[RMDB]
RNA sequence: GGGAACGACUCGAGUAGAGUCGAAAAGAUAUGGAGUAGACGAAUCCAUGAACUACUCUGUACCAUCGGAAACGAUGGGUAGGAGCAUGGACUAUCUACUCCUAAGUCAAAGUGUCGUUCGCGACACCACAGCGAUACUCUUCGGAGUAUCGCUGUGAAAAGAAACAACAACAACAAC
Reactivity to DMS in 0.01 (KOAc 150mM, MgCl2 10mM, bicine 150mM(pH8.5), 24C), signal-to-noise 3, nucleotides 027 to 126: g010a070u000a300u000g010g000a020g020u010a010g010a040c120g000a200a110u020c030c000a000u000g000a090a030c080u000a300c000u000c010u000g000u000a300c000c010a000u020c020g000g000a150a110a250c010g020a000u000g000g020g010u050a300g000g160a010g000c010a010u010g000g010a070c040u000a210u000c030u000a000c010u000c000c010u000a000a030g030u000c040a140a140a140g000u000g000u000c000g010u000u000c270g010c030g000a030c000a000c000
Reactivity to 2A3 in 0.01 (KOAc 150mM, MgCl2 10mM, bicine 150mM(pH8.5), 24C), signal-to-noise 4, nucleotides 027 to 126: g050a010u100a080u210g000g000a020g000u000a000g010a070c130g130a160a300u000c010c010a010u020g000a060a060c090u280a070c000u300c010u050g300u300a070c000c010a010u010c010g050g040a120a040a070c000g000a010u010g060g000g020u070a040g010g020a020g000c000a000u010g010g020a010c050u030a020u010c000u000a000c000u000c000c000u000a060a010g060u000c100a140a070a100g000u000g000u000c000g010u020u160c300g000c030g160a010c000a000c000
Structure probing data (DMS and 2A3) for a 177-nucleotide construct.
For DMS, 2,003 sequencing reads were counted.
DMS (dimethyl sulfate) methylates the pairing face of unpaired adenines and cytosines.
The reactions ran in a buffer of 150 mM KOAc, 10 mM MgCl2 and 150 mM bicine (pH 8.5), at 24 C.
DMS adducts were read by reverse transcription with MarathonRT.
For 2A3 the reverse transcriptase was SuperScript II with manganese.